[RMDB]
RNA sequence: GGGAACGACUCGAGUAGAGUCGAAAAAAGGCUAGGUGUAAACAAGCUCCAGAACUUUAGGGCCCAGUCAUCAGGAGAAAGGCCAAGUUUGAGCUAUGCACAGCUCAGUUUUGAUGACCGGAGAGUGCGUAGCUUUAGUUUUCGAACUAAAGCUACGAAAAGAAACAACAACAACAAC
Reactivity to DMS in 0.01 (KOAc 150mM, MgCl2 10mM, bicine 150mM(pH8.5), 24C), signal-to-noise 8, nucleotides 027 to 126: a050a040g010g010c030u010a040g010g010u000g010u000a060a060a070c090a080a120g000c030u000c020c180a120g010a070a070c060u000u000u000a090g010g010g010c020c010c040a080g010u000c020a060u000c100a070g000g010a070g010a080a120a110g000g010c030c040a060a060g000u000u000u000g010a020g010c010u000a070u010g000c130a060c100a050g000c000u000c050a040g000u000u000u000u000g000a070u000g000a080c020c040g000g010a080g010a110g020u000g010
Reactivity to 2A3 in 0.01 (KOAc 150mM, MgCl2 10mM, bicine 150mM(pH8.5), 24C), signal-to-noise 5, nucleotides 027 to 126: a000a000g050g000c040u070a030g110g000u050g020u070a070a110a060c050a080a030g010c010u020c020c020a060g050a150a050c030u140u120u160a110g030g020g060c000c020c010a010g040u030c020a060u020c020a030g140g060a060g050a110a080a000g060g000c010c020a040a040g010u030u040u050g010a010g000c010u040a060u190g060c070a050c020a060g020c010u010c020a010g010u020u010u060u100g080a070u060g030a010c000c030g070g040a100g000a010g110u140g040